An RNA of 207 nucleotides, treated with 2A3 and read out base by base. Source: RMDB library OK3TST, as collected in RNAgym. Conditions: 150 mM KOAc, 10 mM MgCl2 and 150 mM bicine (pH 8.5), 24 C.
RNA sequence: GGGAACGACUCGAGUAGAGUCGAAAAGUUGGGAAGGGGGUGCAGGAAGCUCAACCCCUCUGGGCACCAACCCUGCAUUGCAGGUUGGCACCUUACUUCCCUGGGAUCCCCAGAGUUGGUCCAAGGAGGGAGAGUGGGUUCUCAAUACGGUACCAAAGCAUUUCCUAGGAUUCGUCCUAGGAAAUGCAAAAGAAACAACAACAACAAC
Reactivity to 2A3 in 0.01 (KOAc 150mM, MgCl2 10mM, bicine 150mM(pH8.5), 24C), signal-to-noise 1, nucleotides 027 to 156: g150u160u110g050g000g000a010a000g110g040g000g030g000u010g000c000a000g120g070a180a040g020c030u020c000a050a110c010c040c040c000u000c050u030g000g010g000c000a050c050c000a000a080c040c040c030u000g000c150a300u040u300g060c010a000g000g000u000u090g120g000c050a020c000c010u030u130a160c000u010u060c000c000c000u000g040g000g000a040u080c020c040c040c000a040g010a020g110u080u050g020g000u050c110c080a100a040g110g000a020g020g020g000a060g000a030g010u160g000g000g000u100u000c030u020c000a020a140u140a070c130g010g000u050a020c000c060a010a010a010